[RMDB]
RNA sequence: GGGAACGACUCGAGUAGAGUCGAAAAAGCCACCGCUACGGCGGUGGCAAGUAGAAAAGUUGGUGCUUAGACCACGCCCUCUACCGUAAUAAUAGAUAAAUAGGCUAGUAUCAGUACGCUGAUACAAAAAACACUCACACGUUCGCGUGUGAGUGAAGAUAUUAACUUUGUUCGCAAAGUUAAUAUCAAAAGAAACAACAACAACAAC
Reactivity to 2A3 in 0.01 (KOAc 150mM, MgCl2 10mM, bicine 150mM(pH8.5), 24C), signal-to-noise 5, nucleotides 027 to 156: a000g010c000c000a000c010c000g010c010u030a030c210g130g000c000g010g000u000g000g000c000a000a010g000u020a010g010a020a000a010a010g030u070u040g020g020u080g060c130u220u170a030g050a070c010c000a000c000g000c000c000c000u000c000u010a010c020c010g090u030a060a060u080a230a040u050a210g110a070u120a080a090a070u110a030g020g000c050u050a040g010u000a000u000c010a000g020u020a030c220g000c090u000g000a000u000a010c010a020a150a000a000a010a010c010a000c000u010c000a000c000a000c000g020u080u050c220g020c000g100u000g000u010g000a000g000u000g010a000a000
Reactivity to DMS in 0.01 (KOAc 150mM, MgCl2 10mM, bicine 150mM(pH8.5), 24C), signal-to-noise 2, nucleotides 027 to 156: a080g010c010c010a000c030c000g010c000u000a120c220g060g030c010g010g050u020g020g010c000a000a020g020u010a090g000a080a030a050a120g020u000u000g030g010u000g030c170u010u010a130g000a070c030c020a090c030g000c010c000c020u000c040u000a040c010c030g020u000a100a080u000a130a240u010a080g000a100u000a020a040a110u020a030g020g000c020u000a160g030u000a040u000c000a030g020u000a040c300g070c030u000g010a050u000a010c020a000a020a070a080a070a120c010a030c000u000c000a000c010a030c000g040u000u010c300g040c030g050u000g020u010g010a020g000u000g000a010a020